[RMDB]
RNA sequence: GGGAACGACUCGAGUAGAGUCGAAAACCGAAGAGGAAGAAGAGGACAUGGACGCGAACCGUGAGUGGAACCCUCGAUCCUUUAUUGGGGGGUACACUCGAGGAGUGGAAGGCGGGUAGGGGGGACCGUUCCAUACAAUGUUCGCAUUGUAUGGAACAAAAGAAACAACAACAACAAC
Reactivity to DMS in 0.01 (KOAc 150mM, MgCl2 10mM, bicine 150mM(pH8.5), 24C), signal-to-noise 1, nucleotides 027 to 126: c020c010g030a120a080g000a040g030g020a090a050g010a060a070g010a100g000g020a070c100a050u000g000g000a040c110g000c120g000a090a090c070c050g000u000g020a030g060u000g040g000a120a180c010c010c000u000c000g010a010u000c230c200u000u010u010a050u000u010g000g000g000g000g000g000u000a120c090a000c000u000c010g000a050g000g000a130g010u030g000g020a040a050g000g000c150g030g000g000u000a080g020g000g000g000g000g000a060c190c140
Reactivity to 2A3 in 0.01 (KOAc 150mM, MgCl2 10mM, bicine 150mM(pH8.5), 24C), signal-to-noise 1, nucleotides 027 to 126: c010c000g010a040a020g020a010g050g030a060a000g010a030a020g030a030g040g000a000c040a070u110g040g000a030c040g000c040g070a040a050c050c010g020u050g050a000g000u020g020g010a070a040c010c010c000u000c000g010a050u120c030c020u170u270u170a030u060u030g000g000g000g000g000g000u080a010c000a000c010u000c000g010a030g000g010a060g020u120g030g040a060a010g030g040c070g010g000g000u100a080g000g020g010g000g010g000a000c020c050